[RMDB]
RNA sequence: GGGAACGACUCGAGUAGAGUCGAAAAAUGAAGCAGCUCAUGCAUGUCUAGUAGGUUCCUGGUAGCUGGUACCCUAAGCCCUCAGUAAUCAGUGUUUUGUCCUGACUAGGUAGGAUGCUUUAAAUUAGAGGUGUAGCUGUAGGCCUGACCUUGGCUAGAGUAUGGACUAUUUCGAUAGUCCAUACUCAAAAGAAACAACAACAACAAC
Reactivity to DMS in 0.01 (KOAc 150mM, MgCl2 10mM, bicine 150mM(pH8.5), 24C), signal-to-noise 3, nucleotides 027 to 156: a120u000g020a070a130g000c030a060g010c050u010c070a130u000g010c060a110u000g010u000c020u010a080g010u000a080g020g010u000u000c020c030u000g010g040u000a140g010c040u000g020g000u000a050c020c010c020u010a070a100g000c050c010c020u010c040a070g020u000a100a060u010c040a070g020u010g010u000u010u000u020g010u010c050c020u010g010a090c060u000a060g020g000u010a060g010g010a070u000g010c050u000u000u000a060a060a170u000u010a130g000a070g010g030u000g010u020a090g020c020u000g020u000a080g020g000c040c050u000g000a100c030c020u000u000g020g020c030u000a150
Reactivity to 2A3 in 0.01 (KOAc 150mM, MgCl2 10mM, bicine 150mM(pH8.5), 24C), signal-to-noise 5, nucleotides 027 to 156: a000u160g030a050a010g010c030a010g000c020u040c060a060u100g020c020a040u070g050u020c040u020a050g030u030a040g050g060u070u080c020c010u020g040g030u030a050g020c040u030g050g040u080a060c020c000c030u060a060a050g000c010c020c000u040c020a060g020u070a060a070u040c010a010g020u020g080u160u100u170u130g090u070c000c010u000g020a060c040u070a030g030g060u020a020g040g030a020u060g020c000u080u060u090a060a140a080u080u060a060g010a030g030g040u050g010u060a020g010c020u030g030u070a020g010g080c000c010u030g050a140c020c010u060u060g030g000c010u030a030